[RMDB]
RNA sequence: GGGAACGACUCGAGUAGAGUCGAAAAUUUUCAGUGGGUCCAGUGCUGCUUUAGUCUGCAGUUGACUUAGCUCUAUUACUAAGGGUGAUGGCCUUCUGCGGAGUCUACCCAAUACCCCACGAAUUAGCACCGGGAGGAUAUUCGUAUCCUCCCGGUGAAAAGAAACAACAACAACAAC
Reactivity to DMS in 0.01 (KOAc 150mM, MgCl2 10mM, bicine 150mM(pH8.5), 24C), signal-to-noise 2, nucleotides 027 to 126: u010u010u010u010c060a070g020u000g010g000g020u040c090c100a110g020u000g000c070u000g000c100u000u000u000a110g000u000c030u000g000c030a020g010u000u020g000a020c050u000u020a300g000c000u020c050u000a130u020u010a130c210u020a110a050g000g010g010u020g000a160u000g000g050c020c020u000u000c030u000g010c030g020g020a050g010u000c060u010a130c070c070c000a090a130u030a150c110c000c010c000a050c080g010a120a140u000u000a090g010
Reactivity to 2A3 in 0.01 (KOAc 150mM, MgCl2 10mM, bicine 150mM(pH8.5), 24C), signal-to-noise 1, nucleotides 027 to 126: u010u000u040u090c010a000g030u020g000g010g040u060c110c050a040g060u060g050c070u010g000c040u070u020u090a070g010u020c000u040g060c010a000g010u020u050g030a040c000u010u050a000g000c010u110c000u000a100u140u180a140c170u120a090a100g020g000g000u040g000a070u180g030g020c020c000u010u010c010u040g000c000g000g000a020g000u000c000u000a070c000c000c030a040a010u060a060c020c020c040c020a010c010g000a030a090u120u060a160g080